[RMDB]
RNA sequence: GGGAACGACUCGAGUAGAGUCGAAAAGGGGUCAACCCGGUAAUACGACGACCAGGCGACGAUCUAUACUGAAGCCUCCACGGUAUAGGGAGCCUGACCGUCGUGCCAGGGUUGACGGAGGCACCCAAACACACAAGCGCUUCGGCGCUUGUGUGAAGCGUAUGUUCUUGUUCGCAAGAACAUACGCAAAAGAAACAACAACAACAAC
Reactivity to 2A3 in 0.01 (KOAc 150mM, MgCl2 10mM, bicine 150mM(pH8.5), 24C), signal-to-noise 1, nucleotides 027 to 156: g000g000g040g000u030c040a000a040c000c000c040g000g010u270a170a130u300a100c040g000a000c000g000a000c010c000a010g020g020c020g040a300c010g000a070u000c000u000a000u000a010c000u030g050a110a030g000c030c000u000c000c000a000c000g000g000u010a000u000a000g010g000g020a000g000c000c000u010g000a010c010c010g000u010c000g000u000g000c000c050a080g000g000g020u000u000g000a000c010g000g000a000g000g010c000a020c010c010c000a020a130a000c000a000c000a000c010a000a000g020c000g010c020u090u210c300g090g000c010g010c000u060u000g000u010g000u000g010a000a010
Structure probing data (2A3) for a 207-nucleotide construct. For 2A3, 1,737 sequencing reads were counted. The data come from the RNA Mapping Database (RMDB), library RNAMAK.